[RMDB]
RNA sequence: GGGAACGACUCGAGUAGAGUCGAAAAGUACUCAUUUUCAGAAGUGGAAGCUACUGCUUCAUUCAUGUCGGCUUUGCUACUUUCUACGUUGGGAAAGCACGAAGAGGCAUUGCCGUAUCUGAAGAAGAUGUGAACCGAAGUUCGCUUCGGUUCACAUAAAAGAAACAACAACAACAAC
Reactivity to 2A3 in 0.01 (KOAc 150mM, MgCl2 10mM, bicine 150mM(pH8.5), 24C), signal-to-noise 1, nucleotides 027 to 126: g030u050a090c010u000c030a050u140u000u050u070c010a000g010a120a010g070u110g050g150a070a020g080c040u130a100c080u300g030c020u060u000c010a100u040u000c020a050u070g070u110c030g010g040c000u000u000u050g030c020u060a110c030u050u030u000c010u030a110c120g140u170u040g060g040g050a110a060a100g010c070a020c170g020a030a030g050a040g050g000c010a000u010u030g000c000c020g010u020a030u050c000u010g020a020a020g030a010a010g090
Reactivity to DMS in 0.01 (KOAc 150mM, MgCl2 10mM, bicine 150mM(pH8.5), 24C), signal-to-noise 2, nucleotides 027 to 126: g010u010a110c070u030c050a140u000u000u000u010c020a070g020a150a160g010u010g000g000a100a080g020c030u000a100c110u000g020c000u010u000c020a140u000u000c030a000u000g020u000c000g020g000c000u000u020u000g020c020u000a120c020u000u000u010c030u000a040c150g020u010u010g000g030g010a070a080a140g000c200a040c110g000a070a030g010a300g020g000c000a020u000u000g000c000c000g030u000a040u000c080u000g000a030a030g000a030a060g000
An RNA of 177 nucleotides, treated with 2A3 and DMS and read out base by base.
2A3 adducts were read by reverse transcription with SuperScript II with manganese.
High 2A3 reactivity points to a flexible backbone, as in loops and unpaired stretches.
The RNA was probed in 150 mM KOAc, 10 mM MgCl2 and 150 mM bicine (pH 8.5) at 24 C.
It was measured as part of the RMDB library OK2TST.
For DMS the reverse transcriptase was MarathonRT.
For 2A3, 1,080 sequencing reads were counted.